[RMDB]
The data come from the RNA Mapping Database (RMDB), library OK3TST. This 207-nucleotide RNA was probed chemically with 2A3. For 2A3, 667 sequencing reads were counted. The reactions ran in a buffer of 150 mM KOAc, 10 mM MgCl2 and 150 mM bicine (pH 8.5), at 24 C.
RNA sequence: GGGAACGACUCGAGUAGAGUCGAAAAGUGUCAAUACGUCGUGAUAUUACGUCGGAUGUAAACAAAGCAGAUGCUAAGGAAUGUAAACAAACAUAUUAAGGGAUAAACAAACAGUUAGGGUCUUUAUUUCUCACUACAAAUAUACUAGAUUCUAUAAGUAAUGGUGACCAUUCGUGGUCACCAUUACAAAAGAAACAACAACAACAAC
Reactivity to 2A3 in 0.01 (KOAc 150mM, MgCl2 10mM, bicine 150mM(pH8.5), 24C), signal-to-noise 2, nucleotides 027 to 156: g020u030g090u070c020a050a030u120a100c010g010u020c030g030u050g040a120u030a070u280u140a010c050g010u020c000g000g000a010u000g050u150a050a040a250c090a030a040a000g010c070a000g030a040u100g030c040u030a050a020g090g040a090a000u120g040u200a050a020a100c060a010a130a000c060a050u100a020u170u170a080a040g020g000g010a040u020a050a140a000c060a010a050a000c010a010g040u130u050a020g020g000g000u000c000u000u160u010a070u000u080u020c040u070c000a020c050u100a050c080a020a130a050u130a000u000a130c050u050a000g080a140u060u000c010u080a140u050a230a030